[RMDB]
RNA sequence: GGGAACGACUCGAGUAGAGUCGAAAACUCAGCCUCCCUAGUAGCUGAGAUUACGGGCGCCUGCCAUCGUGCCCAGCUAAUUUUUGUACUUUUAGUAGAGACGGUGGGGUUUCAUCAUAUUGGCCAGUCGUUAGCAAGAAUUCGUUCUUGCUAACGAAAAAGAAACAACAACAACAAC
Reactivity to 2A3 in 0.01 (KOAc 150mM, MgCl2 10mM, bicine 150mM(pH8.5), 24C), signal-to-noise 1, nucleotides 027 to 126: c010u000c010a010g050c000c010u100c040c000c030u090a130g020u090a010g050c000u030g010a020g000a060u020u230a080c050g060g030g000c020g100c010c060u060g080c030c010a040u050c010g010u030g070c000c010c060a020g030c030u030a050a080u050u090u070u070u060g090u070a070c010u050u020u070u130a050g030u080a020g040a000g030a040c020g030g040u010g030g040g000g000u010u040u040c010a010u000c000a000u070a080u170u060g020g050c010c000a000g030
Reactivity to DMS in 0.01 (KOAc 150mM, MgCl2 10mM, bicine 150mM(pH8.5), 24C), signal-to-noise 2, nucleotides 027 to 126: c020u000c010a090g010c010c090u010c040c050c030u000a110g030u010a070g010c020u000g010a030g000a200u000u000a090c090g030g010g020c060g010c060c090u010g000c030c030a020u010c080g020u000g010c020c000c020a130g010c050u010a010a010u000u000u000u010u020g010u000a080c100u000u000u000u000a080g010u000a060g010a060g040a040c070g020g010u000g010g000g010g020u000u000u000c040a030u000c080a090u000a130u000u000g020g000c020c100a130g010
Chemical mapping of a 177-nucleotide RNA with 2A3 and DMS. The DMS profile rests on 2,669 reads. For DMS the reverse transcriptase was MarathonRT. For 2A3 the reverse transcriptase was SuperScript II with manganese. Conditions: 150 mM KOAc, 10 mM MgCl2 and 150 mM bicine (pH 8.5), 24 C.